[RMDB]
RNA sequence: GGGAACGACUCGAGUAGAGUCGAAAAAGAUGGGCUUACCUACGGGAAUCCCUGGGUCCCCCUGAUGUCCAGUCCCUCCCCCGUCCGAGAGAAGGGAGACUCCGGAACUCCUGCCAUUUGAGGGACGCCACUAAUGAUUGUUCGCAAUCAUUAGUGGAAAAGAAACAACAACAACAAC
Reactivity to 2A3 in 0.01 (KOAc 150mM, MgCl2 10mM, bicine 150mM(pH8.5), 24C), signal-to-noise 1, nucleotides 027 to 126: a020g070a070u060g000g010g010c020u060u060a050c000c000u020a010c130g040g020g040a150a170u150c050c010c000u060g040g000g000u050c020c000c010c010c020u010g030a040u080g080u000c010c060a020g070u030c010c000c000u030c000c010c040c000c000g020u000c030c010g130a150g010a010g020a090a030g020g020g000a010g000a000c000u010c040c000g000g030a020a010c010u020c000c010u020g040c040c010a080u060u080u090g010a010g000g020g000a000c020g000
Reactivity to DMS in 0.01 (KOAc 150mM, MgCl2 10mM, bicine 150mM(pH8.5), 24C), signal-to-noise 3, nucleotides 027 to 126: a060g010a120u010g010g000g000c120u000u010a090c020c010u010a090c190g010g010g010a110a100u010c030c010c010u000g000g000g000u010c040c090c000c020c020u000g010a080u000g000u000c020c080a090g000u000c020c010c010u000c010c020c000c010c020g000u000c020c010g000a160g000a060g010a140a180g000g010g010a050g000a100c040u010c060c030g000g010a070a100c060u000c020c010u000g010c240c070a090u000u010u010g010a100g010g000g000a040c060g000
Annotation:
An RNA of 177 nucleotides, treated with 2A3 and DMS and read out base by base. Values cover nucleotides 27 to 126. For DMS, 2,344 sequencing reads were counted. DMS (dimethyl sulfate) methylates the pairing face of unpaired adenines and cytosines.